[RMDB]
Source: RMDB library RFM100, as collected in RNAgym. Structure probing data (2A3 and DMS) for a 177-nucleotide construct. Conditions: 150 mM KOAc, 10 mM MgCl2 and 150 mM bicine (pH 8.5), 24 C. Reactivities are given for positions 27 through 126. For 2A3 the reverse transcriptase was SuperScript II with manganese.

RNA sequence: GGGAACGACUCGAGUAGAGUCGAAAAAAUAACCCAUUUUGUCUGACCGAUCAUCAACGCAGCAAUGGCGUAAGACGUAUUGAUUUUUCAGACAGUUAGCGGGCUGCGGGUUGCAGUCCUUACCGGUAUACAAAACCCGAUUCGUCGGGUUUUGUAUAAAAGAAACAACAACAACAAC
Reactivity to 2A3 in 0.01 (KOAc 150mM, MgCl2 10mM, bicine 150mM(pH8.5), 24C), signal-to-noise 3, nucleotides 027 to 126: a010a000u290a060a020c020c010c000a000u220u200u060u040g000u010c000u000g000a000c000c000g000a000u000c000a010u020c080a070a000c000g000c000a010g000c070a170a300u300g300g000c000g000u000a000a000g070a010c010g020u020a110u030u040g010a010u000u000u000u030u010c000a020g000a000c010a000g030u000u160a070g050c060g030g000g010c010u020g000c030g080g090g050u060u180g020c030a000g010u010c000c000u010u000a030c000c010g080g020u040
Reactivity to DMS in 0.01 (KOAc 150mM, MgCl2 10mM, bicine 150mM(pH8.5), 24C), signal-to-noise 2, nucleotides 027 to 126: a000a050u000a100a140c000c040c000a200u040u010u050u000g000u000c000u000g030a010c060c170g000a020u000c000a040u000c210a090a030c010g000c020a200g050c030a240a070u040g030g000c020g040u000a030a010g020a130c040g000u000a060u040u000g000a000u000u010u010u000u010c000a000g020a000c000a010g020u030u030a060g030c180g000g000g000c010u020g000c060g000g000g000u100u040g010c000a020g020u000c000c000u030u020a000c130c090g050g040u010